[RMDB]
RNA sequence: GGGAACGACUCGAGUAGAGUCGAAAAGCAGAGACACCAGUCACAGACACUAGAACUCACGCUACGUCAGGUCGGAUGUGACAGGCCGAAAGCAGGGCCAAGCUUUGGCGUUGCAUACGAGCGGCGAAAAUUAAUAUAUAUUCGUAUAUAUUAAUUUAAAAGAAACAACAACAACAAC
Reactivity to 2A3 in 0.01 (KOAc 150mM, MgCl2 10mM, bicine 150mM(pH8.5), 24C), signal-to-noise 5, nucleotides 027 to 126: g060c050a020g030a010g020a080c010a050c040c030a020g010u050c010a030c010a080g120a050c020a040c070u070a070g050a170a020c010u030c020a040c050g040c050u160a060c040g030u010c040a020g050g080u030c010g040g040a050u060g020u020g040a030c020a040g110g040c000c000g120a070a030a010g020c020a020g080g090g000c020c020a020a020g050c030u130u050u030g000g000c030g200u010u030g000c000a020u060a060c010g020a030g100c000g010g010c010g000a040
Reactivity to DMS in 0.01 (KOAc 150mM, MgCl2 10mM, bicine 150mM(pH8.5), 24C), signal-to-noise 4, nucleotides 027 to 126: g050c080a090g000a110g010a090c080a060c050c030a080g010u000c030a060c050a040g000a090c060a050c060u000a070g010a090a080c030u020c050a060c090g010c070u020a090c070g010u010c050a080g020g000u000c030g000g000a070u030g000u010g010a040c040a070g000g010c020c010g010a070a100a070g020c030a020g030g010g020c020c030a070a080g010c120u020u010u000g010g010c000g000u010u010g000c020a070u030a070c090g000a120g000c020g010g000c020g000a040
An RNA of 177 nucleotides, treated with 2A3 and DMS and read out base by base. The reactions ran in a buffer of 150 mM KOAc, 10 mM MgCl2 and 150 mM bicine (pH 8.5), at 24 C. The DMS profile rests on 5,975 reads. 2A3 adducts were read by reverse transcription with SuperScript II with manganese. For DMS the reverse transcriptase was MarathonRT.